RNA sequence: GGGAACGACUCGAGUAGAGUCGAAAACCUCUCUUCGGAGAGGAAGUAAUUAUUAGUGUUAAUUGUAGCGCAUCCCAAUUAAAUAUUGCAACCUAUUUUAUUAAAAUUGAGGACGAGUUCGCUCGUCGUUUAGAUGUAAGUUCGCUUACAUCUAAACAAAAGAAACAACAACAACAAC
Reactivity to DMS in 0.01 (KOAc 150mM, MgCl2 10mM, bicine 150mM(pH8.5), 24C), signal-to-noise 4, nucleotides 027 to 126: c000c000u000c000u000c000u000u000c150g040g000a020g000a000g010g000a020a060g010u000a070a070u000u000a090u010u000a090g000u000g000u000u000a030a090u010u000g010u000a050g000c060g010c060a100u000c010c030c000a050a090u020u000a040a060a070u000a050u010u000g010c070a060a110c070c050u010a020u000u010u010u000a080u010u010a070a050a070a110u010u000g010a090g010g010a010c000g000a020g010u000u020c230g010c020u000c000g010u000c020
Reactivity to 2A3 in 0.01 (KOAc 150mM, MgCl2 10mM, bicine 150mM(pH8.5), 24C), signal-to-noise 6, nucleotides 027 to 126: c000c000u000c000u000c000u020u080c230g050g000a010g000a020g010g010a020a010g020u080a020a140u180u150a030u060u110a070g040u030g050u110u080a120a110u230u120g110u130a030g040c030g000c040a040u040c000c000c000a020a010u090u070a020a030a040u120a030u060u150g000c000a050a030c010c020u040a130u150u110u080u060a190u070u220a100a140a120a110u100u170g060a090g150g020a000c000g000a010g020u060u080c130g060c050u000c010g000u000c010
Structure probing data (DMS and 2A3) for a 177-nucleotide construct. DMS adducts were read by reverse transcription with MarathonRT. The DMS profile rests on 4,657 reads. The RNA was probed in 150 mM KOAc, 10 mM MgCl2 and 150 mM bicine (pH 8.5) at 24 C. Source: RMDB library RFMREP, as collected in RNAgym.